This 177-nucleotide RNA was probed chemically with DMS and 2A3. Values are in units of 0.01, from 0 to 300, in steps of 10. For DMS, 42,056 sequencing reads were counted. 2A3 adducts were read by reverse transcription with SuperScript II with manganese. Values cover nucleotides 27 to 126. Conditions: 150 mM KOAc, 10 mM MgCl2 and 150 mM bicine (pH 8.5), 24 C.
RNA sequence: GGGAACGACUCGAGUAGAGUCGAAAACGGGCUACGAGGGAUUGCUCAUUAACUCUGGUUACGUAGUAAUAUAGCCAUAGACGUCCCUCGUUAUAAUGUCUACCAGAGUUAUGACAUUAAUCGUCUAGGUACACGGACAUUUCGAUGUUUGUGUACCAAAAGAAACAACAACAACAAC
Reactivity to DMS in 0.01 (KOAc 150mM, MgCl2 10mM, bicine 150mM(pH8.5), 24C), signal-to-noise 9, nucleotides 027 to 126: c080g010g000g010c030u000a010c010g010a010g000g000g000a050u020u030g010c140u010c030a050u030u030a020a010c000u000c000u000g000g000u010u010a060c110g020u020a100g020u020a100a090u030a080u030a080g010c090c080a120u020a060g010a070c070g010u000c010c000c000u000c010g000u000u020a030u030a050a050u020g000u010c060u010a070c010c000a020g010a010g010u000u000a050u000g000a020c030a060u020u020a060a090u020c090g010u000c030u000a100
Reactivity to 2A3 in 0.01 (KOAc 150mM, MgCl2 10mM, bicine 150mM(pH8.5), 24C), signal-to-noise 9, nucleotides 027 to 126: c020g020g010g000c020u040a010c020g000a000g020g010g010a040u070u170g040c040u020c030a070u090u160a010a010c000u000c000u010g010g020u050u050a060c110g040u050a080g100u060a160a150u190a080u110a150g070c050c040a080u100a060g070a040c050g030u020c000c000c000u000c000g000u000u000a010u010a010a040u080g020u000c030u020a010c000c010a000g000a000g000u030u030a040u060g000a010c010a030u080u170a100a150u170c080g040u010c050u030a050